Record summary:
Chemical mapping of a 207-nucleotide RNA with 2A3 and DMS. As a SHAPE reagent, 2A3 marks flexible, mostly unpaired nucleotides at the ribose 2'-OH.
RNA sequence: GGGAACGACUCGAGUAGAGUCGAAAAGAAGGGUGAAAGCCCUUGAUACUGUAGUGGAAAUUAUAAAUCAGAAGAGUUCUGAGUUGCUUAAGCAGAACUAAAAUAAAAAGACAAGCAUUAUUACAAACAUGGCGAGGUAAGUUCGCUUACCUCGCAACGUAUGAGACAGGUUCGCCUGUCUCAUACGAAAAGAAACAACAACAACAAC
Reactivity to 2A3 in 0.01 (KOAc 150mM, MgCl2 10mM, bicine 150mM(pH8.5), 24C), signal-to-noise 4, nucleotides 027 to 156: g060a010a000g020g010g000u040g060a090a030a030g040c010c000c000u010u000g020a020u040a060c060u040g060u130a040g050u050g070g070a040a040a070u170u090a140u130a190a100a040u100c050a010g070a170a020g040a040g050u020u000c000u010g030a030g040u100u050g050c000u050u050a080a030g010c000a000g010a000a000c060u060a020a040a000a020u110a010a050a010a000a000g030a010c020a010a010g000c000a010u020u070a070u120u150a190c090a040a120a000c050a110u130g090g000c000g000a000g000g000u010a010a010g000u020u090c160g020c120u000u000a000c000c000u000c000g000c000a000a000
Reactivity to DMS in 0.01 (KOAc 150mM, MgCl2 10mM, bicine 150mM(pH8.5), 24C), signal-to-noise 1, nucleotides 027 to 156: g000a040a060g030g000g040u000g030a190a160a300g000c000c000c000u000u000g000a140u000a060c030u000g020u000a050g030u000g050g030a060a100a040u000u010a000u000a090a100a080u000c000a030g000a130a180g000a210g010u000u000c010u010g010a110g010u010u010g000c070u000u000a080a090g040c030a070g000a030a160c010u020a040a040a040a070u000a030a100a120a170a220g020a100c070a030a100g010c010a080u030u000a080u000u040a120c100a070a020a080c050a090u000g030g000c030g000a030g030g020u000a010a020g030u000u010c300g000c080u000u000a000c010c030u000c020g010c000a000a010